[RMDB]
Source information
An RNA of 177 nucleotides, treated with 2A3 and DMS and read out base by base. The reactions ran in a buffer of 150 mM KOAc, 10 mM MgCl2 and 150 mM bicine (pH 8.5), at 24 C. The data come from the RNA Mapping Database (RMDB), library TTRDES. For 2A3 the reverse transcriptase was SuperScript II with manganese.
RNA sequence: GGGAACGACUCGAGUAGAGUCGAAAAGAUAUGGAUCGUUACAGGGAGCUGGUGGUCGGAAACGACCAUCAGCAUCGAUCUGUUACGAUCCUAAGUCAAACUUCGUGCAUGUUCGCAUGCACGAAGACUAGUUUAGGUUGUUCGCAACCUAAACUAGAAAAGAAACAACAACAACAAC
Reactivity to 2A3 in 0.01 (KOAc 150mM, MgCl2 10mM, bicine 150mM(pH8.5), 24C), signal-to-noise 3, nucleotides 027 to 126: g000a000u010a010u050g000g000a000u000c010g000u010u050a000c000a010g060g130g160a190g060c010u010g000g010u010g000g000u000c000g000g000a040a000a000c000g000a000c000c000a000u000c010a010g000c020a000u010c010g020a080u000c000u000g010u000u010a010c010g000a010u000c000c000u010a010a010g010u000c040a080a070a130c000u000u000c000g000u000g000c000a010u010g080u070u130c300g020c170a010u000g000c000a000c000g000a000a000g000a070
Reactivity to DMS in 0.01 (KOAc 150mM, MgCl2 10mM, bicine 150mM(pH8.5), 24C), signal-to-noise 4, nucleotides 027 to 126: g000a030u000a080u010g000g010a010u000c000g010u000u000a000c000a010g020g000g010a180g040c000u000g010g030u000g010g000u000c000g010g010a010a030a040c010g010a020c000c000a010u000c000a010g020c010a050u000c300g000a110u010c010u000g010u000u000a010c000g010a020u000c000c000u000a000a050g000u010c010a140a150a210c000u000u000c000g000u000g000c010a000u000g000u000u010c300g020c000a010u000g000c010a010c000g000a000a000g020a170